[RMDB]
RNA sequence: GGGAACGACUCGAGUAGAGUCGAAAAUGUGGCUUGAGUGUGCGGGCGUGGGGCGUGCAAGGCGAGCGCGUGUGCCCACCCUGAGCCCCUCCCGCCGCCUACACCUUGAUCUUAUUUGAUUGGGUCGCAUGUUAGUUAACUUCGGUUAACUAACAUGAAAAGAAACAACAACAACAAC
Reactivity to 2A3 in 0.01 (KOAc 150mM, MgCl2 10mM, bicine 150mM(pH8.5), 24C), signal-to-noise 7, nucleotides 027 to 126: u120g010u040g030g040c070u110u110g050a080g130u090g030u110g030c000g010g020g000c150g100u140g000g000g000g000c040g040u120g070c030a050a030g070g020c030g030a040g050c030g000c060g060u190g100u200g060c000c000c000a020c010c000c000u010g010a000g010c000c000c000c000u000c010c000c000g010c010c000g010c000c000u020a020c030a030c030c000u030u130g000a020u010c020u080u210a250u240u250u130g120a180u050u080g030g000g000u030c010g000
Reactivity to DMS in 0.01 (KOAc 150mM, MgCl2 10mM, bicine 150mM(pH8.5), 24C), signal-to-noise 5, nucleotides 027 to 126: u010g020u000g000g010c090u000u000g000a110g030u010g010u020g010c020g010g000g010c300g010u010g010g010g010g020c020g020u000g020c020a050a030g000g020c070g000a070g020c040g020c270g020u010g010u010g010c000c000c010a050c020c010c010u000g000a200g010c010c010c030c010u000c010c020c020g000c040c010g010c010c020u000a060c100a060c010c060u000u000g000a030u000c010u000u000a160u000u010u000g010a100u010u010g010g000g010u000c060g020

An RNA of 177 nucleotides, treated with 2A3 and DMS and read out base by base.
The reactions ran in a buffer of 150 mM KOAc, 10 mM MgCl2 and 150 mM bicine (pH 8.5), at 24 C.
The data come from the RNA Mapping Database (RMDB), library RFMREP.